[RMDB]
RNA sequence: GGGAACGACUCGAGUAGAGUCGAAAAGAGCUGGGAAAUUAGUAUGAGGUUGGAAAUGGUCGAUGUGUUGUAUUACACAGUAGACAACACUGCUGUAACCGCUACGGUGAGGUUAUGGCGGCAUCCCUGCCUCAAAACGUUUCGACGUUUUGAGGCAAAAAGAAACAACAACAACAAC
Reactivity to 2A3 in 0.01 (KOAc 150mM, MgCl2 10mM, bicine 150mM(pH8.5), 24C), signal-to-noise 2, nucleotides 027 to 126: g050a020g000c090u120g000g160g000a050a120a070u110u070a080g070u040a110u160g070a040g060g000u080u060g020g090a030a050a080u170g060g000u010c010g010a100u010g000u000g010u050u000g090u090a140u110u080a000c120a010c030a040g070u110a010g010a020c000a000a010c010a000c020u020g000c030u030g000u000a000a000c030c000g010c060u060a060c110g030g120u140g020a100g010g010u030u000a000u000g020g000c000g000g000c030a010u000c000c000c000
Reactivity to DMS in 0.01 (KOAc 150mM, MgCl2 10mM, bicine 150mM(pH8.5), 24C), signal-to-noise 2, nucleotides 027 to 126: g000a070g010c000u020g010g000g000a060a040a110u020u020a110g040u020a060u000g000a030g000g010u000u000g000g000a050a060a050u000g000g080u000c000g020a110u000g000u020g000u010u000g010u000a040u060u020a000c020a070c010a080g000u020a170g000a010c030a080a070c120a090c000u040g000c040u000g000u000a030a000c010c000g000c020u000a110c140g030g010u000g010a120g000g010u000u000a000u000g000g020c000g020g020c100a100u000c010c000c030
Chemical mapping of a 177-nucleotide RNA with 2A3 and DMS.
The DMS profile rests on 3,393 reads.
Source: RMDB library RFM100, as collected in RNAgym.